[RMDB]
RNA sequence: GGGAACGACUCGAGUAGAGUCGAAAAGUGAUGCUAAGGCCGUGAAGCCGCCCUGAUCUCUUCGGAGUUGAGGGGAGUGGUGGAGCCGCCGGACCAAGCGGUUAGUAGGUGAGUGAUGGGGUGACGCGCCUCUUGAUCCCUUCGGGGAUCAAGAGGCAAAAGAAACAACAACAACAAC
Reactivity to DMS in 0.01 (KOAc 150mM, MgCl2 10mM, bicine 150mM(pH8.5), 24C), signal-to-noise 1, nucleotides 027 to 126: g000u000g020a300u010g000c060u020a200a210g060g020c050c250g000u000g030a300a220g000c000c030g010c010c000c000u000g000a180u000c000u000c000u000u030c210g000g020a000g010u010u010g000a260g000g000g000g000a010g010u000g000g030u000g000g000a300g000c060c110g000c000c020g010g020a170c250c030a100a160g000c040g000g000u020u000a080g000u010a050g010g010u000g000a130g020u000g020a100u000g000g000g000g030u000g020a080c230g020c070
Source: RMDB library OK2TRN, as collected in RNAgym.
The record gives the reactivity of an RNA of 177 nucleotides to DMS.
The DMS profile rests on 701 reads.
Conditions: 150 mM KOAc, 10 mM MgCl2 and 150 mM bicine (pH 8.5), 24 C.